[RMDB]
RNA sequence: GGGAACGACUCGAGUAGAGUCGAAAAGCACAUGGGCAGUGGAUUUGAUGGUCAUCUCACAUCGUGCUAGCGAGGGAACCCUGUCUGGGGGUGAACCGCGAAACAGUACCGGACUCACCGUGUGGGAUCCUGUCUUUCGGAGUUCAAACGGUUAAACGUAUACCUGCUUGUUCGCAAGCAGGUAUACAAAAGAAACAACAACAACAAC
Reactivity to 2A3 in 0.01 (KOAc 150mM, MgCl2 10mM, bicine 150mM(pH8.5), 24C), signal-to-noise 1, nucleotides 027 to 156: g020c000a000c020a140u060g000g060g090c010a150g060u070g110g080a090u070u090u070g200a160u080g010g090u020c040a060u060c080u000c040a040c010a070u060c020g000u000g000c030u010a010g070c000g010a260g000g020g020a030a060c010c000c000u060g080u200c030u150g170g010g010g000g000u020g070a000a000c030c010g020c000g050a030a030a000c050a040g060u070a040c000c060g000g010a010c010u000c040a050c000c080g050u080g050u060g040g010g000a030u090c000c000u050g070u020c000u030u170u070c040g040g000a050g020u000u040c000a100a070a110c080g010g100u060u120a070a130a030c130